[RMDB]
Notes
The record gives the reactivity of an RNA of 170 nucleotides to 2A3 and DMS. The DMS profile rests on 3,372 reads. The reactions ran in a buffer of 150 mM KOAc, 10 mM MgCl2 and 150 mM bicine (pH 8.5), at 24 C.
RNA sequence: GGGAACGACUCGAGUAGAGUCGAAAACAGACCCCAAAUUUGUUGAUAAAUACUAUGCUUUUCUUAAUAAGCACUUUUCUAUGAUGAUACUGUCUGAUGACGGUGUCGUUUGCUAUAAUAGUGAUUAACCCCGUGAUCUUCGGAUCACGGAAAAGAAACAACAACAACAAC
Reactivity to 2A3 in 0.01 (KOAc 150mM, MgCl2 10mM, bicine 150mM(pH8.5), 24C), signal-to-noise 3, nucleotides 027 to 129: c010a000g160a030c010c010c000c000a040a040a040u060u080u050g050u010u040g000a030u150a110a070a040u130a060c160u170a040u190g010c060u000u030u050u240c080u030u140a070a060u030a120a000g000c020a020c020u040u050u030u030c090u060a030u060g000a000u000g000a000u030a000c010u000g040u000c060u110g230a180u300g040a000c000g000g000u000g000u010c000g000u060u000u050g000c040u040a020u050a140a030u020a020g050u030g090a030u040u080a000a050c000c010
Reactivity to DMS in 0.01 (KOAc 150mM, MgCl2 10mM, bicine 150mM(pH8.5), 24C), signal-to-noise 1, nucleotides 027 to 129: c050a140g010a150c000c000c000c090a140a060a140u110u020u000g000u100u030g030a080u000a090a000a020u080a260c200u050a270u040g010c200u000u000u020u030c070u000u120a000a290u020a060a000g170c000a080c040u000u000u020u010c140u080a030u010g000a020u000g000a010u000a000c090u040g060u030c000u020g030a130u090g020a080c040g050g000u010g010u000c000g050u030u140u000g030c130u020a020u020a170a000u000a020g000u000g000a010u000u000a020a120c130c100

It was measured as part of the RMDB library 15KLIB.